Notes: The record gives the reactivity of an RNA of 177 nucleotides to DMS. The reactions ran in a buffer of 150 mM KOAc, 10 mM MgCl2 and 150 mM bicine (pH 8.5), at 24 C. For DMS, 1,974 sequencing reads were counted. DMS adducts were read by reverse transcription with MarathonRT.
[RMDB]
RNA sequence: GGGAACGACUCGAGUAGAGUCGAAAAGAUAUGGAUGGAGCCGAUUAUUAUACCUUCGAUAAGCUCCCAUCGGAAACGAUGGUGAGCUUUUGACGAAGCGUAUAAUAAUCGGCUCCAUCCUAAGUCACCUUCUUAAGAGGUUCGCCUCUUAAGAAGGAAAAGAAACAACAACAACAAC
Reactivity to DMS in 0.01 (KOAc 150mM, MgCl2 10mM, bicine 150mM(pH8.5), 24C), signal-to-noise 2, nucleotides 027 to 126: g010a060u000a300u010g010g010a010u010g000g010a020g000c000c000g000a020u000u000a010u000u000a010u000a010c020c000u000u000c010g010a140u000a020a040g010c000u000c010c000c000a000u000c010g010g000a160a160a240c010g020a010u000g000g000u000g000a010g020c010u000u000u000u000g000a260c160g000a020a010g000c300g030u000a030u010a020a000u000a000a000u010c000g000g000c010u000c000c000a000u000c000c000u010a010a070g000u000c030a170